[RMDB]
RNA sequence: GGGAACGACUCGAGUAGAGUCGAAAAUUGGUUCUACCUCCUAUUUUUUAUGAAGAGAAUGAAUCUUUUUCUCGAAGGAUCAGAAAAAAAUGGGUCAGGAUCUCCUGCGGGAAUGAUUUGGAAGAUCGGAGAUCUAGUGUUUCGACACUAGAUCUCCAAAAGAAACAACAACAACAAC
Reactivity to DMS in 0.01 (KOAc 150mM, MgCl2 10mM, bicine 150mM(pH8.5), 24C), signal-to-noise 2, nucleotides 027 to 126: u030u000g000g010u000u020c000u050a110c140c090u000c020c000u000a020u000u000u000u050u040u070a110u010g000a090a240g000a050g000a020a050u020g000a110a040u000c080u000u020u000u020u020c000u010c010g020a120a160g000g030a110u030c000a080g020a000a000a020a090a000a080a000u030g020g010g010u100c130a020g000g000a000u000c040u000c000c000u010g050c060g000g000g010a020a040u010g000a040u000u000u000g000g090a150a050g000a050u000c110
Reactivity to 2A3 in 0.01 (KOAc 150mM, MgCl2 10mM, bicine 150mM(pH8.5), 24C), signal-to-noise 3, nucleotides 027 to 126: u030u040g030g010u000u080c020u020a110c010c010u040c000c010u000a120u050u110u020u010u030u000a140u100g070a080a050g030a010g020a080a080u100g030a090a060u070c000u030u130u010u020u000c020u000c050g030a090a060g140g100a070u120c060a040g230a050a050a020a000a000a000a020u060g000g020g010u030c050a000g000g060a030u000c010u000c010c000u030g000c090g070g010g020a020a170u060g050a060u080u050u120g020g050a080a050g070a120u100c130